[RMDB]
RNA sequence: GGGAACGACUCGAGUAGAGUCGAAAACACACAUGCUUUCGCGAGGUGUAUUGCUUCGGUCGAUGUCAGGACUGAAGAUUCCACCUUCUCUGCAGCGGUGGUUUCAUUGGUACCCUCGCAGGGGAGGCAUUAAUCGAGGAUUCGUCCUCGAUUAAUGAAAAGAAACAACAACAACAAC
Reactivity to 2A3 in 0.01 (KOAc 150mM, MgCl2 10mM, bicine 150mM(pH8.5), 24C), signal-to-noise 9, nucleotides 027 to 126: c060a000c010a010c010a060u190g050c050u140u200u210c100g010c040g060a090g020g040u050g010u050a120u020u160g030c010u000u000c000g010g010u010c020g150a210u210g220u300c130a060g200g040a010c000u000g000a000a000g000a010u030u000c010c010a020c010c000u040u030c030u000c020u070g030c040a050g010c070g060g020u060g060g010u040u120u130c140a160u100u210g050g010u040a010c000c000c000u000c050g000c000a000g020g020g000g000a010g010g000
Reactivity to DMS in 0.01 (KOAc 150mM, MgCl2 10mM, bicine 150mM(pH8.5), 24C), signal-to-noise 9, nucleotides 027 to 126: c050a050c060a070c120a090u020g010c020u000u010u020c080g000c050g010a080g010g020u020g000u000a060u000u010g000c040u000u000c000g010g000u000c000g000a130u040g010u050c250a150g010g000a010c000u000g000a020a020g000a080u000u000c010c000a110c000c000u000u000c020u010c040u010g010c050a040g010c300g000g020u000g000g020u010u020u010c220a160u040u030g020g020u010a030c010c000c000u000c110g000c010a020g000g010g000g000a010g000g010
Chemical mapping of a 177-nucleotide RNA with 2A3 and DMS. The DMS profile rests on 40,609 reads. Values are in units of 0.01, from 0 to 300, in steps of 10. The 2A3 profile rests on 40,226 reads. Reactivities are given for positions 27 through 126. The RNA was probed in 150 mM KOAc, 10 mM MgCl2 and 150 mM bicine (pH 8.5) at 24 C.